[RMDB]
This 170-nucleotide RNA was probed chemically with DMS and 2A3. DMS adducts were read by reverse transcription with MarathonRT. For 2A3, 7,411 sequencing reads were counted. It was measured as part of the RMDB library 15KLIB.
RNA sequence: GGGAACGACUCGAGUAGAGUCGAAAACUGGAUAUCCUAAGCUUUUCAUUACUCGUGAAGAGGCUGUAAGGCAAGUUCGAAGCUGGAUAGGCUUCGAUGUUGAGGGUGCUCAUGCUUCCCGUAAUGCGAAGCCCCGAGUUCGCUCGGGGCAAAAGAAACAACAACAACAAC
Reactivity to DMS in 0.01 (KOAc 150mM, MgCl2 10mM, bicine 150mM(pH8.5), 24C), signal-to-noise 4, nucleotides 027 to 129: c100u100g050g020a030u010a060u000c010c020u000a060a090g030c000u000u000u000u000c030a040u010u070a090c070u010c090g000u020g070a050a090g000a040g010g020c230u000g010u030a070a020g000g050c020a160a090g000u060u030c020g030a060a000g040c020u100g020g050a040u060a050g040g070c000u000u000c010g030a030u000g000u020u070g010a070g050g010g000u020g030c000u050c050a040u030g010c120u020u000c010c050c030g000u050a090a080u070g020c200g030a090a110
Reactivity to 2A3 in 0.01 (KOAc 150mM, MgCl2 10mM, bicine 150mM(pH8.5), 24C), signal-to-noise 5, nucleotides 027 to 129: c030u040g010g030a020u000a050u140c010c010u020a090a000g010c020u010u030u050u000c010a040u030u160a080c010u030c050g070u110g190a170a040g030a030g030g000c000u030g010u040a010a010g060g010c050a070a060g040u050u010c000g000a000a000g020c020u040g040g200a150u140a180g010g000c000u000u000c000g000a000u010g040u050u150g040a060g020g040g000u000g010c020u020c030a040u170g020c020u050u030c010c000c000g020u130a050a060u220g130c060g070a060a020